Record summary
The record gives the reactivity of an RNA of 177 nucleotides to DMS and 2A3. The reactions ran in a buffer of 150 mM KOAc, 10 mM MgCl2 and 150 mM bicine (pH 8.5), at 24 C. The DMS profile rests on 848 reads. For 2A3 the reverse transcriptase was SuperScript II with manganese.

[RMDB]
RNA sequence: GGGAACGACUCGAGUAGAGUCGAAAAGCGUCCUGGUUCGCCAGGACGCAAAUAAAUGGUAGACUGAGACCGUCUAACUCAGAUAACCAGAUAUAGACGGAAAAACUGACUUGUUCGCAAGUCAGAAUCGGCAAUACUAGUUCGCUAGUAUUGCCGAAAAAGAAACAACAACAACAAC
Reactivity to DMS in 0.01 (KOAc 150mM, MgCl2 10mM, bicine 150mM(pH8.5), 24C), signal-to-noise 1, nucleotides 027 to 126: g000c010g030u000c000c000u000g000g040u000u020c260g030c000c020a000g000g010a020c000g000c000a000a040a060u000a040a030a040u010g000g000u010a070g000a120c000u000g000a020g040a160c000c000g020u000c010u000a010a060c030u000c010a000g000a040u000a030a210c010c000a110g000a170u030a070u000a040g000a010c000g000g000a180a040a080a180a200c000u000g000a000c000u000u010g000u020u020c220g010c000a000a000g000u000c010a030g010a070a040
Reactivity to 2A3 in 0.01 (KOAc 150mM, MgCl2 10mM, bicine 150mM(pH8.5), 24C), signal-to-noise 2, nucleotides 027 to 126: g000c010g000u020c000c000u000g000g040u060u030c190g010c060c000a010g000g000a000c010g000c000a010a010a000u010a000a010a020u120g030g030u060a020g100a300c000u000g000a000g030a080c000c010g020u000c020u000a190a190c000u010c000a000g000a040u080a060a120c000c010a000g010a010u070a000u010a060g000a000c000g000g080a010a070a010a020a000c000u000g010a000c000u000u000g030u090u060c260g020c120a010a000g000u010c000a000g010a010a080
Reactivities are rounded to 0.1 and cut off at 0 and 3.